[RMDB]
RNA sequence: GGGAACGACUCGAGUAGAGUCGAAAACACAGGCAGCCGUUGGAUCAGGGCAGCUUCCCUUCUCCUCUGCCAGCCACUAGGGCACAUCUUAUGGAGACCAGGGGAAGCAGAGUUCCUCAUGGCCUUUCAUCCCAAAGUGGAAGAAGCUCAGAGCUGGGUAUUGUUAGAGGUUCGCCUCUAACAAUACAAAAGAAACAACAACAACAAC
Reactivity to 2A3 in 0.01 (KOAc 150mM, MgCl2 10mM, bicine 150mM(pH8.5), 24C), signal-to-noise 3, nucleotides 027 to 156: c060a010c040a030g010g080c030a020g020c030c070g130u100u090g090g030a080u080c070a060g010g030g050c020a000g010c000u020u010c000c020c000u060u040c020u000c000c010u070c040u020g020c040c020a010g050c060c000a140c180u210a090g030g020g060c040a020c020a100u130c050u170u150a140u280g010g000a010g010a010c050c180a050g010g000g000g010a000a000g030c010a010g000a010g020u120u070c020c000u050c030a090u050g030g000c000c000u030u100u100c030a110u090c020c020c070a090a120a050g090u100g040g030a050a040g040a090a030g010c040u070c100a060g030a050g060c030u140g040g090
Reactivity to DMS in 0.01 (KOAc 150mM, MgCl2 10mM, bicine 150mM(pH8.5), 24C), signal-to-noise 1, nucleotides 027 to 156: c040a000c060a120g050g000c010a100g050c050c060g070u010u010g010g020a100u000c060a090g020g030g000c010a150g020c020u000u000c000c010c010u010u010c000u000c000c000u010c020u010g030c000c020a300g000c060c050a140c120u010a190g010g020g090c030a090c100a090u000c160u010u010a170u010g010g010a000g010a040c270c080a070g030g020g000g030a050a020g020c010a110g020a100g020u000u000c000c010u000c050a090u030g010g020c000c020u000u010u020c060a070u010c010c000c030a060a140a090g010u000g010g010a040a090g000a080a060g000c010u000c040a120g000a060g000c030u010g030g000